An RNA of 177 nucleotides, treated with DMS and read out base by base. Values are in units of 0.01, from 0 to 300, in steps of 10. Values cover nucleotides 27 to 126. Source: RMDB library OK2TRN, as collected in RNAgym.

[RMDB]
RNA sequence: GGGAACGACUCGAGUAGAGUCGAAAAAGGGCAGCAAGAACUCCCCCAGCGGCCAGCGGAUGCGAGGAGGCCUCGAGGCGAUCAGGCGGGAGGCGCCGAGGAUAGGCGGGAGCUUUGCGGUGUGGGGGCCAGUACCAAUUUUCGAAUUGGUACUGGCAAAAGAAACAACAACAACAAC
Reactivity to DMS in 0.01 (KOAc 150mM, MgCl2 10mM, bicine 150mM(pH8.5), 24C), signal-to-noise 1, nucleotides 027 to 126: a130g000g000g000c070a040g000c050a100a090g000a170a120c030u020c010c000c010c000c060a120g030c130g010g020c040c060a100g000c060g000g030a110u010g010c030g010a150g030g000a130g000g020c020c010u000c060g000a160g010g010c040g000a120u000c170a140g000g000c080g000g000g000a120g020g010c040g000c020c020g020a100g020g000a100u000a020g000g040c060g040g020g030a090g050c040u000u000u000g020c040g000g020u000g040u000g000g000g000g000